[RMDB]
RNA sequence: GGGAACGACUCGAGUAGAGUCGAAAAGCUGGACGUUACGCAGAGCUUCCACCGAGGGCAGGCUGGGACUCAGAUAGAGAUAGGCGCCGCUGAAACUGAGCAGCACUCCACAAAUCAGGGUGACGCACCCUCAUUCACUAUUCGUAGUGAAUGAGGGAAAAGAAACAACAACAACAAC
Reactivity to 2A3 in 0.01 (KOAc 150mM, MgCl2 10mM, bicine 150mM(pH8.5), 24C), signal-to-noise 9, nucleotides 027 to 126: g030c040u040g010g030a040c030g050u080u100a030c050g060c050a010g020a020g080c030u050u000c010c010a040c010c030g030a090g030g030g020c050a040g020g020c020u030g010g010g040a050c000u000c040a020g040a120u140a040g090a010g030a030u090a100g050g000c020g000c010c020g010c020u010g020a060a050a040c030u030g010a000g020c020a000g010c000a030c030u040c030c010a080c050a050a120a020u120c060a060g030g000g020u020g030a020c020g000c030a050
Reactivity to DMS in 0.01 (KOAc 150mM, MgCl2 10mM, bicine 150mM(pH8.5), 24C), signal-to-noise 7, nucleotides 027 to 126: g010c050u010g010g010a070c050g000u010u000a060c070g030c050a060g000a110g000c050u010u010c030c030a100c060c060g020a120g010g010g020c060a060g000g010c070u010g010g020g010a130c030u010c030a070g010a100u020a100g000a080g010a110u030a110g000g000c050g010c020c050g000c030u000g000a050a090a080c090u030g000a070g010c060a080g000c050a080c040u020c010c050a080c120a060a070a070u020c080a060g000g010g010u010g010a070c070g010c130a170